This 177-nucleotide RNA was probed chemically with 2A3 and DMS. Conditions: 150 mM KOAc, 10 mM MgCl2 and 150 mM bicine (pH 8.5), 24 C. For 2A3 the reverse transcriptase was SuperScript II with manganese. Source: RMDB library RFMREP, as collected in RNAgym.

RNA sequence: GGGAACGACUCGAGUAGAGUCGAAAAUUCGUUACUAUUAUAAUUAAAAUGGUCGAUGGCGGUUUGUCUCUGGAAAUCAGAGAGAAAGACUUGAAUAGGUAUAGGGAAUGCAUGUGAAUGCGUUCCGGUAAUUGAGUAUGUUCGCAUACUCAAUUACAAAAGAAACAACAACAACAAC
Reactivity to 2A3 in 0.01 (KOAc 150mM, MgCl2 10mM, bicine 150mM(pH8.5), 24C), signal-to-noise 3, nucleotides 027 to 126: u040u010c010g020u070u090a060c010u030a040u300u040a120u090a280a170u230u130a120a080a090a170u060g010g000u010c030g010a050u100g050g080c020g030g050u030u060u090g100u040c020u000c000u010g040g050a070a220a060u260c000a000g000a010g030a000g010a060a050a000g000a030c030u060u090g030a030a040u070a120g120g030u140a090u150a160g030g010g020a020a000u000g000c000a000u000g050u050g100a120a000u010g020c000g010u000u010c000c020g010
Reactivity to DMS in 0.01 (KOAc 150mM, MgCl2 10mM, bicine 150mM(pH8.5), 24C), signal-to-noise 3, nucleotides 027 to 126: u000u000c020g010u000u010a110c010u010a050u010u010a200u020a120a170u040u010a080a080a090a130u000g000g000u000c020g020a050u000g000g030c070g000g010u000u000u000g000u000c010u000c000u010g000g010a060a140a170u010c010a000g010a020g010a040g010a040a040a070g000a060c040u000u000g010a060a070u000a040g000g010u000a040u010a100g010g010g010a020a000u000g000c000a010u000g000u010g010a120a010u000g000c000g020u000u000c000c010g020